[RMDB]
An RNA of 207 nucleotides, treated with 2A3 and read out base by base. Source: RMDB library M2RFPK, as collected in RNAgym. Conditions: 150 mM KOAc, 10 mM MgCl2 and 150 mM bicine (pH 8.5), 24 C.
RNA sequence: GGGAACGACUCGAGUAGAGUCGAAAAUAGAAGAACAGGCUAGGUGGUAUUCCGGUGUGGGAUACUUGGUAAUAUGUAACGCUAAUUGCAUAAGAUUGUAGGACGGAAUUUACAGUCUUGGUUUUUAAAAACUUCUCGUAGUUCGCUACGAGAAGAAGGAUGGUGUUUUGUUCGCAAAACACCAUCCAAAAGAAACAACAACAACAAC
Reactivity to 2A3 in 0.01 (KOAc 150mM, MgCl2 10mM, bicine 150mM(pH8.5), 24C), signal-to-noise 1, nucleotides 027 to 156: u100a000g020a070a000g010a020a030c020a040g090g000c010u060a080g000g060u020g010g010u090a080u050u030c070c040g260g060u130g000u120g020g000g000a000u060a070c000u060u030g040g000u040a030a020u020a080u090g090u040a100a020c020g000c100u110a120a040u160u070g010c020a050u020a120a000g010a030u010u060g010u030a020g100g020a060c100g020g080a020a020u070u120u050a020c020a020g010u000c000u000u020g050g000u000u000u000u030u160a040a140a010a020a010c000u000u010c000u000c010g000u000a000g040u030u020c170g000c060u000a000c000g000a000g000a000a000g000a000a000